[RMDB]
RNA sequence: GGGAACGACUCGAGUAGAGUCGAAAACGUCCGAUGCGGAAGCUCGUGCUUCCGUCGAACGCGAAAGUCGGACGGCGGCCAUGAGUCGCAACGCAAAGCCGCGGCAAGUGGAGUUAGCGAGAAGAGAAAAAGUCACGAGUGUUCGCACUCGUGACAAGAUUCACAAUCUGUUCGCAGAUUGUGAAUCAAAAGAAACAACAACAACAAC
Reactivity to 2A3 in 0.01 (KOAc 150mM, MgCl2 10mM, bicine 150mM(pH8.5), 24C), signal-to-noise 3, nucleotides 027 to 156: c000g000u000c000c000g010a020u020g010c010g000g010a000a000g000c010u150c280g300u300g000c010u040u000c000c000g000u000c000g030a030a030c060g000c040g150a110a080a030g030u010c000g000g010a010c020g040g030c020g030g010c010c020a070u110g010a010g020u000c000g000c010a060a070c060g020c120a180a200a020g030c050c040g010c020g010g050c040a060a030g030u030g030g000a060g020u100u130a070g020c070g010a050g030a160a040g060a020g080a030a090a010a060a000g000u000c000a000c010g000a010g000u010g040u050u080c160g050c070a000c000u000c000g000u010g000a000c000a000a010
Reactivity to DMS in 0.01 (KOAc 150mM, MgCl2 10mM, bicine 150mM(pH8.5), 24C), signal-to-noise 1, nucleotides 027 to 156: c020g000u000c000c020g000a040u000g050c020g000g000a050a040g000c000u000c290g000u000g010c000u000u000c000c000g010u010c030g000a030a110c030g010c020g000a070a100a220g040u000c000g030g030a030c050g010g000c060g010g000c020c020a060u000g010a300g000u010c010g020c020a010a060c020g000c050a150a090a300g030c040c010g030c010g100g000c030a080a300g010u010g030g000a040g030u000u000a140g010c000g010a110g010a030a080g020a180g020a100a190a060a120a100g000u010c000a000c000g000a030g030u000g070u010u010c300g030c040a030c000u010c000g000u000g000a010c000a040a040

Annotation:
This 207-nucleotide RNA was probed chemically with 2A3 and DMS. Source: RMDB library M2RFPK, as collected in RNAgym. The DMS profile rests on 1,804 reads. 2A3 adducts were read by reverse transcription with SuperScript II with manganese. The RNA was probed in 150 mM KOAc, 10 mM MgCl2 and 150 mM bicine (pH 8.5) at 24 C.